[RMDB]
Chemical mapping of a 207-nucleotide RNA with DMS and 2A3. The data come from the RNA Mapping Database (RMDB), library RNAMAK. For DMS, 2,948 sequencing reads were counted. Conditions: 150 mM KOAc, 10 mM MgCl2 and 150 mM bicine (pH 8.5), 24 C. 2A3 adducts were read by reverse transcription with SuperScript II with manganese. 2A3 is a SHAPE reagent: it acylates the 2'-hydroxyl of flexible nucleotides of all four kinds.
RNA sequence: GGGAACGACUCGAGUAGAGUCGAAAACCGCCAUUCGUGGCGGGCUGAUCCUAAGUCUCCUUUUGACGCUCACCGAAGAGCUUUGAUCUAUCGGAAACGAUAGGGAGCUCUAAGGUGAGCGAUAAGGAGAUAUGGAGUGUCGACGAUUCGUCGUCAAUUGAUACAGAAACUUCGGUUUCUGUAUCAAAAAAGAAACAACAACAACAAC
Reactivity to DMS in 0.01 (KOAc 150mM, MgCl2 10mM, bicine 150mM(pH8.5), 24C), signal-to-noise 1, nucleotides 027 to 156: c000c020g020c010c020a070u000u010c300g020u010g010g050c040g000g010g000c080u000g000a150u000c000c000u010a040a230g010u010c010u000c010c010u000u000u000u020g010a270c000g030c000u000c000a040c000c000g010a300a070g000a020g040c000u010u000u010g020a080u000c010u000a030u000c020g010g000a210a140a300c020g020a030u000a000g000g000g000a040g000c020u000c010u010a000a300g010g000u020g010a000g000c000g010a020u000a000a040g030g010a000g010a010u000a090u000g000g000a170g020u000g010u000c020g000a050c000g010a100u000u010c150g010u000c010g010u000c010a100a300
Reactivity to 2A3 in 0.01 (KOAc 150mM, MgCl2 10mM, bicine 150mM(pH8.5), 24C), signal-to-noise 1, nucleotides 027 to 156: c000c000g000c010c000a080u080u120c300g180u100g000g000c020g040g020g020c110u130g070a060u010c000c000u050a180a050g000u040c010u010c000c050u000u010u050u300g140a110c050g000c000u000c000a010c000c000g030a020a070g010a000g010c000u110u030u020g050a010u020c000u000a000u000c000g130g000a160a070a030c010g000a000u000a000g020g000g000a000g040c000u020c000u020a010a030g000g000u000g000a010g000c000g000a000u000a000a000g000g020a000g000a000u010a000u030g030g030a090g020u200g030u090c040g000a010c020g120a280u200u160c180g030u000c010g020u020c090a010a110